[RMDB]
Background:
Chemical mapping of a 177-nucleotide RNA with 2A3 and DMS. The reactions ran in a buffer of 150 mM KOAc, 10 mM MgCl2 and 150 mM bicine (pH 8.5), at 24 C. Source: RMDB library M2PK90, as collected in RNAgym. The 2A3 profile rests on 6,020 reads. For DMS the reverse transcriptase was MarathonRT.
RNA sequence: GGGAACGACUCGAGUAGAGUCGAAAAGGAAAGCACAUGAAGCACGCGAAGCACGGCAAGCACAUGAAGCACUACAAGCACUACAAGCAGCGCAAGCAGUAGAAGCAGCCGAAGCAGUACAAAAAAAACAUAAUUUAAGAUUCGUCUUAAAUUAUGUAAAAGAAACAACAACAACAAC
Reactivity to 2A3 in 0.01 (KOAc 150mM, MgCl2 10mM, bicine 150mM(pH8.5), 24C), signal-to-noise 4, nucleotides 027 to 126: g060g020a100a040a000g020c020a020c020a070u100g030a040a010g010c030a010c050g060c030g040a040a010g040c040a010c060g030g000c020a030a020g020c010a010c000a080u100g040a070a010g020c030a020c060u100a040c030a060a040g010c000a010c050u110a030c050a110a030g040c020a000g010c010g000c040a040a020g010c010a020g030u100a020g010a060a010g010c020a000g010c000c030g020a020a000g000c030a010g050u120a040c120a020a150a020a000a000a000a020
Reactivity to DMS in 0.01 (KOAc 150mM, MgCl2 10mM, bicine 150mM(pH8.5), 24C), signal-to-noise 5, nucleotides 027 to 126: g000g000a070a080a070g010c030a050c070a060u010g020a100a100g020c010a040c090g030c080g020a070a080g020c050a040c070g010g010c060a050a080g000c040a040c070a040u000g000a070a070g000c040a060c080u000a090c120a050a080g010c030a040c060u000a060c080a050a060g010c050a030g010c050g010c060a060a100g000c020a040g010u010a040g010a080a090g000c050a050g010c020c020g000a060a080g010c030a040g010u010a040c070a010a000a010a050a030a070a050